Source information: Conditions: 150 mM KOAc, 10 mM MgCl2 and 150 mM bicine (pH 8.5), 24 C. Chemical mapping of a 207-nucleotide RNA with 2A3. Values are in units of 0.01, from 0 to 300, in steps of 10. 2A3 adducts were read by reverse transcription with SuperScript II with manganese.
[RMDB]
RNA sequence: GGGAACGACUCGAGUAGAGUCGAAAACAAUCAUAACUUUGGAUAAACCAUUACUCUCUUUGAGCUCAGUCUCAUUACCUAUAAACGGGAAUAAUAAUAUUGACCUCCUAGAGUAAUUGUGAGAACCAAAUGAACUCAUAACAAAACAGACAUUCAACCUAUGGUGGUCAUUCGUGACCACCAUAGGAAAAGAAACAACAACAACAAC
Reactivity to 2A3 in 0.01 (KOAc 150mM, MgCl2 10mM, bicine 150mM(pH8.5), 24C), signal-to-noise 1, nucleotides 027 to 156: c030a020a040u160c030a070u120a210a080c080u000u000u000g060g000a110u120a030a150a000c010c000a000u030u040a000c010u030c000u000c010u040u060u060g000a000g000c040u060c050a030g000u010c000u030c080a010u000u060a070c010c010u060a030u160a160a180a000c050g040g040g040a000a040u030a040a040u040a030a000u050a100u100u060g010a020c000c000u010c030c070u010a000g020a000g000u020a050a000u010u000g000u020g000a030g020a010a000c000c000a020a020a020u050g010a000a040c040u080c150a070u080a140a010c040a010a120a000a000c150a100g060a010c000a010u170u080c010a070a000